[RMDB]
RNA sequence: GGGAACGACUCGAGUAGAGUCGAAAAGUAUCCAUGUUCGCAUGGAUACGAAAUAUGCGCGCGUAUAUCCGGUUGGCUGGAUGCGCGCGUCUGGCAGGCCGGUGGUGCUAGUCUUCGGACUAGCAAAUUGUUAGGAAAUCUUCGGAUUUCCUAACAAAAAAGAAACAACAACAACAAC
Reactivity to 2A3 in 0.01 (KOAc 150mM, MgCl2 10mM, bicine 150mM(pH8.5), 24C), signal-to-noise 2, nucleotides 027 to 126: g000u000a000u000c000c000a000u000g030u060u070c260g000c160a000u010g000g000a000u010a000c000g000a020a020a000u190a090u130g030c000g000c000g000c030g000u060a090u010a040u210c030c010g020g120u210u200g300g050c080u020g040g000a000u000g020c010g010c020g000c010g040u000c000u000g060g020c060a010g000g090c050c020g060g090u100g010g030u040g030c000u000a000g000u000c000u000u060c280g070g010a000c000u000a010g000c000a000a010a000
Reactivity to DMS in 0.01 (KOAc 150mM, MgCl2 10mM, bicine 150mM(pH8.5), 24C), signal-to-noise 3, nucleotides 027 to 126: g000u000a000u000c000c000a010u000g000u000u020c210g040c020a010u000g000g010a010u000a000c000g010a060a080a100u010a080u000g010c020g000c010g000c010g030u000a060u010a130u000c000c000g010g020u000u010g030g030c050u000g010g020a030u000g000c010g020c040g020c000g000u000c050u000g010g010c040a060g010g010c040c020g000g010u010g020g010u000g000c000u010a010g000u000c000u000u020c170g020g010a020c000u000a010g010c000a010a030a060
The data come from the RNA Mapping Database (RMDB), library M2PK50. Structure probing data (2A3 and DMS) for a 177-nucleotide construct. The reactions ran in a buffer of 150 mM KOAc, 10 mM MgCl2 and 150 mM bicine (pH 8.5), at 24 C.